Chemical mapping of a 177-nucleotide RNA with DMS. Reactivities are given for positions 27 through 126. The data come from the RNA Mapping Database (RMDB), library TTRDES. Reactivities are rounded to 0.1 and cut off at 0 and 3.

RNA sequence: GGGAACGACUCGAGUAGAGUCGAAAAGAUAUGGAGAUGUGUGGAGCAACAGCGUGUGGAUCGGAAACGAUCCCACGACAUGCUCCGCACAUCUCCUAAGUCAAAGGUGCGUGUUCGCACGCACCAACAAUAUUUUCGCGUUCGCGCGAAAAUAUUGAAAAGAAACAACAACAACAAC
Reactivity to DMS in 0.01 (KOAc 150mM, MgCl2 10mM, bicine 150mM(pH8.5), 24C), signal-to-noise 3, nucleotides 027 to 126: g010a060u000a300u020g000g000a020g000a000u010g020u000g020u000g000g000a010g010c010a030a090c300a210g000c040g010u000g010u010g030g000a020u000c000g000g010a070a090a210c020g040a010u000c000c030c000a020c000g000a010c070a150u000g000c000u000c000c000g010c010a000c010a000u000c010u010c000c000u010a000a050g020u000c050a110a140a120g010g020u000g000c000g050u000g000u000u030c240g030c020a030c010g020c010a020c010c010a060a080